[RMDB]
RNA sequence: GGGAACGACUCGAGUAGAGUCGAAAAUGGUGUUAAGUGGAAUAAGUGGAAAAAUAUACAUAUAUGUACAGGGGGCUACAUAUAUGUAUAUGCCCCCUCGGCCGAGUAUAAGUAGGUAUAAGGUGGACGAUACUGGUACUUUCGAGUACCAGUAUCGAAAAGAAACAACAACAACAAC
Reactivity to DMS in 0.01 (KOAc 150mM, MgCl2 10mM, bicine 150mM(pH8.5), 24C), signal-to-noise 2, nucleotides 027 to 126: u010g000g030u000g000u000u000a050a150g010u000g000g010a080a030u010a050a090g000u040g000g010a010a060a080a090a060u010a010u010a010c000a020u000a030u000a010u000g010u000a030c100a100g010g010g000g000g010c170u000a000c000a010u010a030u020a000u000g010u000a020u010a010u000g000c060c010c020c000c020u010c040g020g000c040c050g010a150g010u000a030u000a040a140g000u020a070g000g010u000a030u000a060a070g010g000u020g020g010a270
Reactivity to 2A3 in 0.01 (KOAc 150mM, MgCl2 10mM, bicine 150mM(pH8.5), 24C), signal-to-noise 2, nucleotides 027 to 126: u100g020g020u050g020u060u080a130a090g030u060g150g020a110a010u100a110a110g030u110g050g010a030a010a000a150a000u030a000u000a010c010a000u020a000u020a000u000g010u000a030c100a110g060g030g000g040g000c040u000a000c010a010u020a000u000a010u000g020u000a000u000a000u010g000c000c000c000c000c000u000c020g020g010c010c000g040a020g050u030a040u020a200a100g090u090a040g100g000u110a120u010a170a030g020g000u040g050g020a030